[RMDB]
RNA sequence: GGGAACGACUCGAGUAGAGUCGAAAAGAUAUGGAGGGAGAGUAGUUAGCGUUUGACGCCUUUCGGAAACGAAAGGCCGAGCUAACGCUCGAAGAACUCCUAAGUCAAAGACCCGUUCGCGGGUCAAUCGAUUAAUCGAGUUCGCUCGAUUAAUCGAAAAAGAAACAACAACAACAAC
Reactivity to DMS in 0.01 (KOAc 150mM, MgCl2 10mM, bicine 150mM(pH8.5), 24C), signal-to-noise 2, nucleotides 027 to 126: g000a020u010a300u010g000g010a030g040g000g020a070g010a010g010u020a060g000u000u000a000g000c010g010u020u010u030g010a180c300g000c000c000u000u000u000c000g000g000a120a070a150c000g000a010a050a010g030g020c010c010g010a030g020c020u000a010a000c000g000c000u000c010g000a080a140g000a090a120c000u000c000c000u000a030a080g000u010c030a090a100a170g000a010c010c000c030g040u010u000c190g030c040g010g010g020u010c010a010a030
Reactivity to 2A3 in 0.01 (KOAc 150mM, MgCl2 10mM, bicine 150mM(pH8.5), 24C), signal-to-noise 1, nucleotides 027 to 126: g040a020u070a020u200g010g010a030g000g110g000a030g030a010g100u300a080g040u120u000a000g020c060g030u130u280u300g090a030c050g000c020c000u010u000u010c020g000g050a080a040a020c010g000a020a000a000g000g000c020c000g020a000g000c010u000a000a010c000g020c000u000c000g110a130a130g020a000a030c000u020c000c000u020a180a030g000u030c020a140a180a000g000a030c000c020c030g030u060u070c300g020c040g060g000g000u000c010a010a030
About this RNA
The record gives the reactivity of an RNA of 177 nucleotides to DMS and 2A3. The reactions ran in a buffer of 150 mM KOAc, 10 mM MgCl2 and 150 mM bicine (pH 8.5), at 24 C. As a SHAPE reagent, 2A3 marks flexible, mostly unpaired nucleotides at the ribose 2'-OH.